[RMDB]
RNA sequence: GGGAACGACUCGAGUAGAGUCGAAAAUUGACUGAAAGGGAAGAUGUACUUUUAUCAUCCGGUGCAGAGUCCUCGAAGACAGACUCACUGUUGAUUUACGGGUCAGUAGCACUGGUUCGCAAGGAGGCGAGCUAUUCAAGUUCGCUUGAAUAGCUCGAAAAGAAACAACAACAACAAC
Reactivity to 2A3 in 0.01 (KOAc 150mM, MgCl2 10mM, bicine 150mM(pH8.5), 24C), signal-to-noise 3, nucleotides 027 to 126: u050u030g070a000c060u070g030a030a040a070g130g070g020a070a030g100a130u080g040u190a090c060u140u160u050u140a090u070c030a030u020c020c020g030g020u060g040c040a010g020a020g120u040c000c040u070c090g050a060a010g030a020c030a010g020a090c030u010c080a090c050u070g020u040u020g060a190u030u020u220a050c050g040g010g000u020c030a070g090u100a020g040c010a000c050u010g030g060u040u030c080g000c070a090a030g040g010a010g050g100
Reactivity to DMS in 0.01 (KOAc 150mM, MgCl2 10mM, bicine 150mM(pH8.5), 24C), signal-to-noise 4, nucleotides 027 to 126: u040u020g000a130c040u010g000a090a050a040g000g000g000a050a040g000a060u020g000u000a090c060u020u040u020u040a120u030c090a060u000c090c040g000g030u010g000c040a060g020a100g000u010c020c010u000c060g000a170a100g000a050c100a100g000a100c090u040c090a250c130u010g010u030u000g000a110u000u010u010a140c110g000g000g000u000c040a070g000u010a190g010c060a300c030u010g010g020u000u000c060g020c090a060a060g020g010a080g000g000
Chemical mapping of a 177-nucleotide RNA with 2A3 and DMS. For 2A3 the reverse transcriptase was SuperScript II with manganese. It was measured as part of the RMDB library OK1LIB. DMS adducts were read by reverse transcription with MarathonRT. For 2A3, 2,973 sequencing reads were counted. For DMS, 5,871 sequencing reads were counted. The reactions ran in a buffer of 150 mM KOAc, 10 mM MgCl2 and 150 mM bicine (pH 8.5), at 24 C.